[RMDB]
RNA sequence: GGGAACGACUCGAGUAGAGUCGAAAAGGAGGACGAAGCAUAUUUCUGUUUCUGGAGGAUUAUUUAUAAUCUGCCGGAAAGUCUUGCAGGUGGCUUGGAUAUGUUCAGUCUGGUAGAAUUAAGCACGAAAACGUGUCCUUGUUCGCAAGGACACGAACAGAUCUUCCUAGUUCGCUAGGAAGAUCUGAAAAGAAACAACAACAACAAC
Reactivity to 2A3 in 0.01 (KOAc 150mM, MgCl2 10mM, bicine 150mM(pH8.5), 24C), signal-to-noise 4, nucleotides 027 to 156: g040g020a030g010g000a010c030g030a050a040g030c030a040u050a060u080u160u040c060u080g110u040u040u030c010u010g010g020a050g010g010a010u010u020a020u020u220u010a080u030a030a040u020c020u040g060c010c010g000g020a030a040a000g030u040c040u130u080g060c050a030g040g040u040g020g050c020u060u040g000g020a000u020a030u120g050u100u090c080a040g010u000c010u040g010g020u060a010g080a070a060u110u110a100a030g030c060a010c120g060a040a060a120a000c000g010u000g000u000c010c010u010u010g000u040u050c170g010c130a000a000g000g020a000c010a000c000g000a000a000
Reactivity to DMS in 0.01 (KOAc 150mM, MgCl2 10mM, bicine 150mM(pH8.5), 24C), signal-to-noise 2, nucleotides 027 to 156: g010g010a130g020g030a080c030g010a180a180g020c050a070u000a050u010u000u010c030u000g000u000u000u000c000u000g010g000a030g020g010a030u000u000a020u020u000u000a100u000a080a000u000c000u000g000c010c010g010g010a030a020a070g020u000c010u000u010g010c030a070g030g020u000g010g010c030u000u000g010g020a060u000a060u000g010u010u000c060a150g040u000c020u000g010g000u000a070g010a080a070u010u020a050a110g010c070a100c040g010a090a060a120a150c000g060u000g030u000c000c000u000u000g000u000u000c300g020c020a010a010g000g010a010c000a010c000g020a030a090